[RMDB]
RNA sequence: GGGAACGACUCGAGUAGAGUCGAAAAUGGCUAACUUUUCGUAUUUUUAGUAGAGAUGGGGUUUCACCAUGUUAACCAGGACUGUCUCGAUCUCCUGACCUCGUGAUCCGCCCACUGCGGCCUCUGUGUCUCUUUGUGAAAAUACAGAUGCCCAAGCCCAGUGCAGAUAGUUCGCUAUCUGCACUGGAAAAGAAACAACAACAACAAC
Reactivity to 2A3 in 0.01 (KOAc 150mM, MgCl2 10mM, bicine 150mM(pH8.5), 24C), signal-to-noise 1, nucleotides 027 to 156: u090g010g040c040u030a100a030c020u030u030u130u070c050g040u080a180u020u060u030u030u010a090g020u070a050g030a010g050a140u050g040g000g010g030u080u100u070c050a030c040c020a040u130g030u100u160a020a070c060c020a010g020g020a050c070u080g060u110c050u060c110g080a060u080c020u030c000c020u040g070a110c030c000u010c010g010u000g020a030u000c010c000g060c000c080c010a060c050u080g070c050g070g010c030c010u000c040u080g010u000g000u040c020u020c000u100u120u140g180u100g090a040a040a030a020u090a000c000a010g020a010u010g060c060c010c000a020a050g050c000
An RNA of 207 nucleotides, treated with 2A3 and read out base by base. The 2A3 profile rests on 634 reads. It was measured as part of the RMDB library OK3TST.